[RMDB]
RNA sequence: GGGAACGACUCGAGUAGAGUCGAAAAGCAGUCGGGAUUGAUACUGUGUACUAAGGACGAGGUAUUGGCUGAGCAAACUAUAUUUAAACUGGACGCCCCUGAUGACAAGACUGUUCAUCUGUUGGAACGUAUUUAAUCAUUUCGAUGAUUAAAUACGAAAAGAAACAACAACAACAAC
Reactivity to DMS in 0.01 (KOAc 150mM, MgCl2 10mM, bicine 150mM(pH8.5), 24C), signal-to-noise 8, nucleotides 027 to 126: g010c040a050g020u010c050g010g010g020a130u000u000g010a090u000a040c070u010g000u010g020u000a080c100u020a080a140g010g010a080c060g020a070g000g010u000a060u000u000g000g010c030u010g000a090g000c070a060a060a080c080u010a070u010a080u010u000u000a050a080a120c080u010g000g010a090c080g010c030c010c020c040u000g010a030u000g010a040c040a070a130g000a130c160u000g010u010u000c030a050u000c030u000g010u010u010g000g010a090a180
Reactivity to 2A3 in 0.01 (KOAc 150mM, MgCl2 10mM, bicine 150mM(pH8.5), 24C), signal-to-noise 5, nucleotides 027 to 126: g020c020a010g020u040c050g060g020g080a090u070u110g040a040u080a100c030u030g020u030g030u120a050c020u060a080a080g070g000a020c020g040a010g030g020u060a110u050u100g030g030c020u020g020a010g040c030a040a060a040c040u030a040u010a080u270u190u120a120a110a050c040u040g030g010a010c020g040c010c000c000c000u000g020a020u020g000a010c010a010a050g070a060c050u070g070u080u010c010a030u010c030u060g050u030u080g070g040a070a020
The record gives the reactivity of an RNA of 177 nucleotides to DMS and 2A3. Values cover nucleotides 27 to 126. The RNA was probed in 150 mM KOAc, 10 mM MgCl2 and 150 mM bicine (pH 8.5) at 24 C. For 2A3 the reverse transcriptase was SuperScript II with manganese.